Chemical mapping of a 207-nucleotide RNA with DMS and 2A3. For DMS the reverse transcriptase was MarathonRT.
RNA sequence: GGGAACGACUCGAGUAGAGUCGAAAAGCAUUGCUGGUGCAGCGCAGCGCGGACGCCCGAACCUGGUCAGAGCCGGAAGGCAGCAGCCAUAAGGGAUGCUUUGCGGGUGCCGUUGCCUUCCGGCAAUGCUUUUAAAAUCCGCUCCUUCGGGAGCGGAGGUUAUACUAACGUUCGCGUUAGUAUAACCAAAAGAAACAACAACAACAAC
Reactivity to DMS in 0.01 (KOAc 150mM, MgCl2 10mM, bicine 150mM(pH8.5), 24C), signal-to-noise 1, nucleotides 027 to 156: g010c050a000u000u000g030c050u000g020g000u000g020c070a060g000c120g050c050a090g030c030g080c050g010g000a080c030g010c000c020c000g000a100a170c040c060u000g020g030u000c020a240g000a300g010c000c020g020g030a130a170g010g030c000a060g020c020a190g000c000c020a130u010a170a290g030g020g010a090u000g000c050u000u010u000g000c030g010g000g010u000g050c040c000g030u000u000g000c020c120u010u000c020c010g030g000c020a010a000u000g000c010u000u000u000u000a020a050a080a210u000c010c000g030c010u000c000c000u000u000c260g040g050g000a030g040c000g000g020a000
Reactivity to 2A3 in 0.01 (KOAc 150mM, MgCl2 10mM, bicine 150mM(pH8.5), 24C), signal-to-noise 3, nucleotides 027 to 156: g000c000a000u000u040g010c000u020g000g020u050g020c000a010g010c000g000c020a010g050c010g010c010g040g000a020c010g020c010c000c000g020a080a070c030c050u020g000g060u140c010a000g000a000g050c000c000g060g130a060a070g050g000c000a000g000c010a000g010c010c000a010u040a070a050g060g010g030a090u090g040c150u000u030u050g030c060g010g100g250u050g030c110c010g030u010u010g000c000c040u150u060c000c010g000g000c000a000a000u000g000c000u000u000u000u010a010a020a010a030u010c000c000g010c000u000c000c000u040u090c180g080g000g000a000g000c000g000g000a000